[RMDB]
RNA sequence: GGGAACGACUCGAGUAGAGUCGAAAAAUCGGAGAAUCUUUCGAGGAAAGCGUCUAGCCAAUCGCAGUCGCAAGGUAAGCUCAAACACGUAGCAGCCCUGCGGACGCUGUUAGAAUUGCGGUUGCUGCUUUGCUAGUAAUUUCGAUUACUAGCAAAGAAAAGAAACAACAACAACAAC
Reactivity to 2A3 in 0.01 (KOAc 150mM, MgCl2 10mM, bicine 150mM(pH8.5), 24C), signal-to-noise 8, nucleotides 027 to 126: a000u040c030g020g020a060g090a200a230u050c040u040u060u020c030g020a030g010g090a110a060a010g030c020g020u010c050u110a060g040c040c020a020a030u050c020g000c010a010g070u060c010g000c010a010a010g010g000u110a110a090g000c010u020c040a110a190a100c120a030c150g100u140a010g000c010a000g000c000c000c010u010g010c020g010g010a020c040g000c040u020g020u040u090a070g030a130a070u040u040g000c020g020g000u020u020g010c010u020g010
Reactivity to DMS in 0.01 (KOAc 150mM, MgCl2 10mM, bicine 150mM(pH8.5), 24C), signal-to-noise 9, nucleotides 027 to 126: a090u000c020g000g000a070g010a140a110u010c060u000u000u000c030g000a070g000g010a080a080a060g010c030g010u000c040u000a080g030c070c070a040a040u000c060g020c010a040g010u000c020g010c010a010a030g000g010u000a070a130g010c020u000c050a080a090a100c230a130c210g010u010a010g020c000a300g000c030c020c020u000g010c010g010g010a030c050g000c050u000g000u000u000a050g000a070a080u000u000g000c090g010g000u000u000g010c090u000g010